RNA sequence: GGGAACGACUCGAGUAGAGUCGAAAAACUUCAAGCCAAUCCUCGUCCGCCUCUCCUCCCUGACCGGAAGUGAGUACACGAGCGUGUGUCUCAGAGCGAGGCAGCUUCUUCUGAUCAAGGAACAGAGAUGCGAGGUAGUAUUCGUACUACCUCGCAUAAAAGAAACAACAACAACAAC
Reactivity to 2A3 in 0.01 (KOAc 150mM, MgCl2 10mM, bicine 150mM(pH8.5), 24C), signal-to-noise 1, nucleotides 027 to 126: a000c060u130u090c050a050a090g030c020c040a040a140u090c010c000u010c020g040u010c020c060g040c040c000u010c000u020c000c000u000c010c000c010u000g000a010c000c000g000g040a010a010g100u050g070a000g020u080a020c060a000c000g130a140g110c100g100u110g010u010g000u030c000u010c030a100g030a010g050c030g020a030g030g070c010a010g000c030u030u040c000u020u000c010u010g040a060u090c030a040a100g080g000a040a020c010a020g050a020g020
Reactivity to DMS in 0.01 (KOAc 150mM, MgCl2 10mM, bicine 150mM(pH8.5), 24C), signal-to-noise 2, nucleotides 027 to 126: a050c100u010u000c050a090a080g000c080c030a060a090u000c010c000u000c060g000u000c060c050g020c060c060u000c030u000c050c080u000c000c030c010u000g010a050c040c030g020g000a080a050g000u010g040a030g000u020a080c070a030c050g010a130g050c190g030u000g020u000g020u020c000u020c010a090g030a070g020c070g010a070g010g010c110a100g000c020u000u000c010u000u000c020u000g000a070u000c040a030a050g000g000a040a060c150a080g010a090g010